[RMDB]
Conditions: 150 mM KOAc, 10 mM MgCl2 and 150 mM bicine (pH 8.5), 24 C. The record gives the reactivity of an RNA of 177 nucleotides to DMS and 2A3. The 2A3 profile rests on 4,029 reads. It was measured as part of the RMDB library M2PK50.
RNA sequence: GGGAACGACUCGAGUAGAGUCGAAAAGAGCUUUUUUUCGAAAAAGCUCCGGCGCAAUGCCUAUGUGUACACUUCACAAGGGUUUGUGCUGGUCAAUGGCAAUACCAGCAAUCUUCGGAUUGCUGAAAACUCUUUUAAAGUUCGCUUUAAAAGAGUUAAAAGAAACAACAACAACAAC
Reactivity to DMS in 0.01 (KOAc 150mM, MgCl2 10mM, bicine 150mM(pH8.5), 24C), signal-to-noise 7, nucleotides 027 to 126: g000a030g010c000u000u010u000u000u000u000u010c110g010a020a010a000a010a010g020c000u000c000c020g010g010c010g020c010a000a020u010g040c000c000u000a100u010g020u010g010u000a120c300a120c240u000u000c010a010c000a030a300g000g010g010u000u000u010g000u000g010c010u000g000g020u000c120a040a070u010g000g000c060a090a060u010a060c220c000a010g000c000a010a010u000c000u000u010c190g020g000a010u000u000g000c000u000g000a020a050
Reactivity to 2A3 in 0.01 (KOAc 150mM, MgCl2 10mM, bicine 150mM(pH8.5), 24C), signal-to-noise 3, nucleotides 027 to 126: g030a000g000c000u020u020u020u000u010u040u110c080g060a030a000a000a010a000g000c010u010c010c000g000g000c000g000c020a030a050u240g070c010c000u090a210u130g020u000g010u050a070c200a100c250u110u100c030a010c010a070a120g010g000g010u010u000u010g000u000g000c000u000g000g040u090c070a070a140u120g120g000c060a070a090u030a190c050c010a010g000c000a000a000u000c000u030u020c070g090g000a010u010u010g000c000u000g000a020a000